Conditions: 150 mM KOAc, 10 mM MgCl2 and 150 mM bicine (pH 8.5), 24 C. Structure probing data (2A3 and DMS) for a 177-nucleotide construct. Reactivities are given for positions 27 through 126. It was measured as part of the RMDB library 15KREP.

[RMDB]
RNA sequence: GGGAACGACUCGAGUAGAGUCGAAAAAGGAGGGGGCUGAGGGCUAACCUACGGAAAUUCCUGAGCUCCCCUGACGUCCAGGCCGUCCCCUCUCCGAGUGAAGGGAGACUCCGGGAUGUCGUGCAUGCCAGUGAUAAUACUUCGGUAUUAUCACUGGAAAAGAAACAACAACAACAAC
Reactivity to 2A3 in 0.01 (KOAc 150mM, MgCl2 10mM, bicine 150mM(pH8.5), 24C), signal-to-noise 2, nucleotides 027 to 126: a000g190g020a130g010g030g000g010g000c020u070g100a000g000g020g000c010u010a040a060c000c010u050a050c080g000g030a020a040a030u080u040c010c020u020g030a010g000c000u050c000c000c000c000u010g010a000c000g000u000c020c010a010g010g030c050c070g010u020c010c000c000c000u030c000u000c010c000g020a040g040u220g020a030a000g020g000g000a110g010a020c000u010c000c000g010g000g000a000u010g000u010c020g040u070g090c040a040u200g060
Reactivity to DMS in 0.01 (KOAc 150mM, MgCl2 10mM, bicine 150mM(pH8.5), 24C), signal-to-noise 3, nucleotides 027 to 126: a070g010g020a130g010g010g000g020g000c040u000g000a020g000g020g010c110u000a050a270c030c050u000a130c220g020g000a020a190a170u000u010c000c000u010g000a010g000c020u000c000c000c010c020u000g000a020c000g040u000c010c010a070g000g000c120c190g000u000c010c010c000c000u000c090u000c010c030g010a150g010u010g020a050a010g020g000g010a050g010a030c010u000c000c010g000g000g000a010u000g010u000c000g030u010g000c160a100u030g000